[RMDB]
RNA sequence: GGGAACGACUCGAGUAGAGUCGAAAAGAUAUGGAGUCCUGUAGACAUGAAGCAUCGGAAACGAUGCUCAACAGCUACUGGACUCCUAAGUCAAAGUUAGCACGGUAGUUCGCUACCGUGCUAACAACGUUUACUUCAUCUUCGGAUGAAGUAAACGAAAAGAAACAACAACAACAAC
Reactivity to 2A3 in 0.01 (KOAc 150mM, MgCl2 10mM, bicine 150mM(pH8.5), 24C), signal-to-noise 1, nucleotides 027 to 126: g000a010u050a050u160g020g000a010g010u010c000c000u000g000u000a010g040a090c180a190u020g020a050a000g000c000a000u020c000g030g000a010a040a020c000g010a000u000g030c000u000c010a000a010c000a010g020c000u010a010c010u000g020g010a000c000u000c000c000u010a020a010g000u000c000a020a010a020g000u010u000a000g000c000a000c010g000g010u010a030g010u100u100c300g020c190u010a000c010c040g000u000g000c000u000a000a000c010a010a000
Reactivity to DMS in 0.01 (KOAc 150mM, MgCl2 10mM, bicine 150mM(pH8.5), 24C), signal-to-noise 2, nucleotides 027 to 126: g000a030u000a300u010g000g000a030g000u000c000c000u000g010u000a000g000a050c150a030u000g000a120a010g000c000a010u000c000g010g000a100a080a230c010g010a020u000g000c000u000c020a040a030c020a020g000c000u000a000c000u000g000g000a010c000u000c000c000u000a010a080g000u000c040a110a050a140g000u000u000a000g010c000a000c000g010g010u000a000g020u000u000c190g010c010u000a000c000c000g000u010g000c010u000a000a020c000a060a120
An RNA of 177 nucleotides, treated with 2A3 and DMS and read out base by base. Values cover nucleotides 27 to 126. For DMS the reverse transcriptase was MarathonRT. It was measured as part of the RMDB library TTRDEL. The reactions ran in a buffer of 150 mM KOAc, 10 mM MgCl2 and 150 mM bicine (pH 8.5), at 24 C.